[RMDB]
RNA sequence: GGGAACGACUCGAGUAGAGUCGAAAAGAUAUGGACUAUCUGGAGAUCCGGAGACGAAUUCGGAAACGAACUAUCUCCGAGAUCGUUGAAAGAUAGUCCUAAGUCAAAAGGACUGUUCGCAGUCCAAGAUUAUUAGAGUGUUCGCACUCUAAUAAUCAAAAGAAACAACAACAACAAC
Reactivity to DMS in 0.01 (KOAc 150mM, MgCl2 10mM, bicine 150mM(pH8.5), 24C), signal-to-noise 8, nucleotides 027 to 126: g010a030u000a300u000g000g000a010c000u000a000u000c010u000g000g000a060g010a020u000c000c010g010g010a020g000a010c100g010a050a190u000u000c010g010g000a100a080a180c010g010a010a040c080u010a270u000c000u000c000c000g000a130g020a000u000c000g010u010u020g000a120a120a020g000a010u000a010g010u000c000c000u000a010a080g000u010c030a060a080a130a120g000g000a010c000u000g010u000u010c200g010c000a010g000u000c000c000a080a080
Reactivity to 2A3 in 0.01 (KOAc 150mM, MgCl2 10mM, bicine 150mM(pH8.5), 24C), signal-to-noise 7, nucleotides 027 to 126: g020a010u050a040u120g000g000a000c000u000a010u010c000u010g020g010a040g000a010u000c010c010g030g000a010g010a010c140g140a160a300u060u020c010g020g020a060a030a030c000g000a010a010c040u060a050u030c010u000c000c010g080a180g000a060u000c000g000u070u010g000a010a000a000g000a000u000a000g000u000c000c000u000a000a000g000u000c010a010a020a070a180g010g000a010c020u010g050u100u120c300g000c160a000g000u000c000c010a000a020